[RMDB]
RNA sequence: GGGAACGACUCGAGUAGAGUCGAAAAUCUGCUUAUCUCUGAUGUCGAGCUUACUGGUCUUUUGUGUUUGUUCAUUCACAGAGGACAAAGAGGAGACUGUGGCCAAGAUGUACAUUUCAGAGUUGAAACCCCUAAACAGGUUCGCCUGUUUAGGGGUAAAAGAAACAACAACAACAAC
Reactivity to 2A3 in 0.01 (KOAc 150mM, MgCl2 10mM, bicine 150mM(pH8.5), 24C), signal-to-noise 1, nucleotides 027 to 126: u000c000u020g000c050u130u130a070u130c020u030c000u020g000a040u050g040u020c050g030a070g040c020u100u160a050c050u090g020g030u000c010u000u030u030u050g140u030g060u130u050u010g080u020u050c040a040u080u030c100a030c050a140g130a100g050g000a020c000a010a050a010g110a030g070g000a020g010a010c000u020g010u040g070g000c040c010a030a080g090a120u140g080u070a000c000a040u060u100u030c000a000g050a060g010u010u010g040a080a030
Reactivity to DMS in 0.01 (KOAc 150mM, MgCl2 10mM, bicine 150mM(pH8.5), 24C), signal-to-noise 2, nucleotides 027 to 126: u010c020u000g010c070u000u010a050u000c010u000c000u000g020a050u000g000u000c020g000a170g000c020u000u010a080c040u000g040g010u000c000u000u000u000u010g010u000g000u010u000u000g010u000u000c050a180u000u010c230a080c290a110g030a100g000g020a010c000a020a080a020g000a130g000g000a050g000a040c010u020g030u010g000g000c020c070a050a140g010a120u000g020u000a040c020a050u010u030u000c000a000g020a010g020u010u020g020a060a120
An RNA of 177 nucleotides, treated with 2A3 and DMS and read out base by base. For 2A3, 841 sequencing reads were counted. Values cover nucleotides 27 to 126. The RNA was probed in 150 mM KOAc, 10 mM MgCl2 and 150 mM bicine (pH 8.5) at 24 C. 2A3 adducts were read by reverse transcription with SuperScript II with manganese. As a SHAPE reagent, 2A3 marks flexible, mostly unpaired nucleotides at the ribose 2'-OH. It was measured as part of the RMDB library OK2TST.